Overview: An RNA of 207 nucleotides, treated with DMS and 2A3 and read out base by base. For DMS, 3,041 sequencing reads were counted. The 2A3 profile rests on 2,984 reads. Conditions: 150 mM KOAc, 10 mM MgCl2 and 150 mM bicine (pH 8.5), 24 C. DMS adducts were read by reverse transcription with MarathonRT.

RNA sequence: GGGAACGACUCGAGUAGAGUCGAAAAACGGAUGGUACGCCAUCCGACCAUUGGGUAGAAGCGUUCAAUCAGCACCGUGACGGUGCAGAUGGGAAAUUGCCCAUGAUACGCACCAUACGUGGUACGAAAAAGCCAUCGGUGUUCGCACCGAUGGCAACUUUUGUUCAAGGUUCGCCUUGAACAAAAGAAAAGAAACAACAACAACAAC
Reactivity to DMS in 0.01 (KOAc 150mM, MgCl2 10mM, bicine 150mM(pH8.5), 24C), signal-to-noise 2, nucleotides 027 to 156: a140c040g000g000a020u010g020g000u000a110c240g020c030c030a000u000c020c030g010a030c020c030a140u000u000g010g030g000u000a050g020a110a120g030c120g020u020u000c010a050a040u000c000a110g020c000a000c010c000g000u000g000a200c130g040g000u000g040c000a030g050a010u010g010g000g000a030a150a150u010u000g010c000c000c000a040u000g020a160u000a070c030g030c000a030c020c000a090u000a160c150g020u020g000g030u000a020c020g000a100a110a090a110a190g020c010c010a000u000c010g000g060u000g000u010u000c220g010c000a070c000c000g000a020u000g000g070c000a000a000
Reactivity to 2A3 in 0.01 (KOAc 150mM, MgCl2 10mM, bicine 150mM(pH8.5), 24C), signal-to-noise 4, nucleotides 027 to 156: a020c010g010g000a000u000g000g030u060a050c240g030c080c000a000u000c000c000g010a010c010c000a070u050u080g040g000g000u080a080g040a140a030g010c040g040u070u070c060a070a090u010c030a030g000c010a010c010c010g110u230g200a110c230g010g000u000g000c010a010g000a000u000g020g000g050a050a140a140u130u080g030c000c000c000a000u040g050a020u060a050c040g020c030a010c000c010a010u050a110c170g050u080g020g000u020a050c040g070a050a010a080a140a000g000c000c000a000u010c000g000g010u020g060u050u090c190g030c060a010c000c000g010a000u010g000g000c000a000a000